[RMDB]
RNA sequence: GGGAACGACUCGAGUAGAGUCGAAAAGGAAACACCUUCGGGUGUUUCCAAAAAAGCGUACUACAAGUGGUAAGGGAGACGGUCCCAAAUAGGACCGAAUCGAGGAUCUUACGUAACAUCUUGUAUCGCAAAAAAUGUCCCACUUCGGUGGGACAAACACGAGCUUAAGUUUCGACUUAAGCUCGUGAAAAGAAACAACAACAACAAC
Reactivity to 2A3 in 0.01 (KOAc 150mM, MgCl2 10mM, bicine 150mM(pH8.5), 24C), signal-to-noise 1, nucleotides 027 to 156: g000g010a030a010a000c040a000c020c040u140u180c300g000g000g010u030g000u000u010u050c000c030a020a020a020a020a020a020g050c080g000u150a120c050u000a000c020a000a000g000u030g000g000u020a000a000g000g000g000a020g000a000c000g030g020u020c050c030c000a140a240a030u240a010g000g000a010c010c020g080a070a110u030c010g010a270g010g000a010u010c000u000u000a000c010g050u070a090a000c030a100u170c010u000u010g010u010a000u210c120g000c040a040a030a040a040a040a040u120g030u000c000c020c000a000c030u060u090c220g060g000u000g000g000g010a000c000a000a000a010
Structure probing data (2A3) for a 207-nucleotide construct.
The RNA was probed in 150 mM KOAc, 10 mM MgCl2 and 150 mM bicine (pH 8.5) at 24 C.
For 2A3, 537 sequencing reads were counted.
For 2A3 the reverse transcriptase was SuperScript II with manganese.
Values cover nucleotides 27 to 156.
The data come from the RNA Mapping Database (RMDB), library RNAMAK.